[RMDB]
Conditions: 150 mM KOAc, 10 mM MgCl2 and 150 mM bicine (pH 8.5), 24 C. Chemical mapping of a 177-nucleotide RNA with DMS. The data come from the RNA Mapping Database (RMDB), library RFM100.

RNA sequence: GGGAACGACUCGAGUAGAGUCGAAAACGUUGGUGUCGACAUACUAUCAGUCUCUAAGGAUUGAAAGUAAGUUGAUAAUGACCAAGUCAAGGUCCAGGCUGGCAACAGAGCAGACAGAGCGAGGCACGUGGCAAUCGUGGUUCGCCACGAUUGCCACAAAAGAAACAACAACAACAAC
Reactivity to DMS in 0.01 (KOAc 150mM, MgCl2 10mM, bicine 150mM(pH8.5), 24C), signal-to-noise 1, nucleotides 027 to 126: c020g060u000u000g000g000u000g000u000c000g010a010c000a180u030a000c010u000a100u000c000a000g000u000c000u030c300u030a100a190g000g000a000u000u000g020a000a050a070g000u000a000a010g000u000u000g000a020u000a130a040u030g000a220c000c000a000a060g000u000c220a120a170g000g000u040c000c040a180g000g000c000u030g000g000c150a060a090c060a070g000a040g000c040a300g040a150c000a160g000a020g000c060g000a070g070g010c080a070c050